[RMDB]
RNA sequence: GGGAACGACUCGAGUAGAGUCGAAAAUCUUUAUAGAGUGCCAGAAAGCCACAAGGGCGGCUCCAUCCUGCUGCAAGCAGCUGCUGCCAAAGGUGCAGCUCAAUUAGCCGGCACACGCUGUCCACGAGUAUUACGCAUGCUUCGGCAUGCGUAAUACAAAAGAAACAACAACAACAAC
Reactivity to DMS in 0.01 (KOAc 150mM, MgCl2 10mM, bicine 150mM(pH8.5), 24C), signal-to-noise 1, nucleotides 027 to 126: u000c030u000u040u010a140u000a030g000a170g060u050g000c080c060a080g000a060a110a210g000c000c000a080c090a090a030g000g000g050c070g020g000c060u000c010c050a030u020c170c040u030g000c000u000g030c180a070a130g000c140a080g000c040u000g000c060u030g030c010c030a080a020a110g010g020u000g000c000a000g050c000u000c000a030a100u000u020a100g000c020c010g030g000c130a130c000a070c080g040c000u000g000u000c000c000a080c140g000a170
Reactivity to 2A3 in 0.01 (KOAc 150mM, MgCl2 10mM, bicine 150mM(pH8.5), 24C), signal-to-noise 3, nucleotides 027 to 126: u000c010u000u090u010a040u030a050g120a000g060u050g050c040c010a110g180a200a140a020g060c040c030a100c070a130a140g030g010g010c020g000g000c010u040c020c030a050u050c000c020u020g010c010u020g020c040a080a120g020c030a000g010c020u010g000c040u060g020c010c010a110a100a080g040g000u040g000c000a020g000c000u000c030a110a230u090u120a000g030c010c000g000g010c030a010c000a000c030g020c000u010g010u020c030c020a120c100g000a020